[RMDB]
RNA sequence: GGGAACGACUCGAGUAGAGUCGAAAAACACACCUUCACCAUCUCCACGAAGAGCUUCUUGCCGUUGGGGUCCUCGUAGUCGGAGAGAUCUGUGCCAUCAAGCUCGGGUUUAUAGGGGUGCAUCACCGGACAUACGAAGGUUCGCCUUCGUAUGUCCAAAAGAAACAACAACAACAAC
Reactivity to 2A3 in 0.01 (KOAc 150mM, MgCl2 10mM, bicine 150mM(pH8.5), 24C), signal-to-noise 1, nucleotides 027 to 126: a000c070a000c000a000c010c000u100u080c070a030c080c010a090u040c020u000c020c010a030c050g050a050a070g020a030g030c040u100u020c020u060u090g040c080c010g140u070u130g060g000g010g030u010c000c030u000c030g060u140a020g090u080c150g040g010a000g020a040g000a000u050c020u050g100u070g000c000c060a090u050c010a040a010g000c010u030c000g000g020g030u000u110u050a160u080a070g000g000g030g000u000g000c000a040u130c010a080c050c060
Reactivity to DMS in 0.01 (KOAc 150mM, MgCl2 10mM, bicine 150mM(pH8.5), 24C), signal-to-noise 2, nucleotides 027 to 126: a020c060a110c070a100c060c010u000u010c120a060c190c060a090u000c050u000c060c080a120c050g010a150a250g000a060g000c050u000u000c060u000u010g000c090c030g020u000u000g010g010g000g020u000c060c010u050c040g010u000a130g010u000c110g000g000a050g010a050g010a040u010c010u000g010u020g000c130c050a050u010c180a020a060g020c000u000c010g010g030g010u000u020u000a090u010a110g000g000g020g010u000g000c060a080u010c060a070c030c040
Source information:
The record gives the reactivity of an RNA of 177 nucleotides to 2A3 and DMS. 2A3 adducts were read by reverse transcription with SuperScript II with manganese. Values cover nucleotides 27 to 126. The RNA was probed in 150 mM KOAc, 10 mM MgCl2 and 150 mM bicine (pH 8.5) at 24 C. For DMS, 1,187 sequencing reads were counted.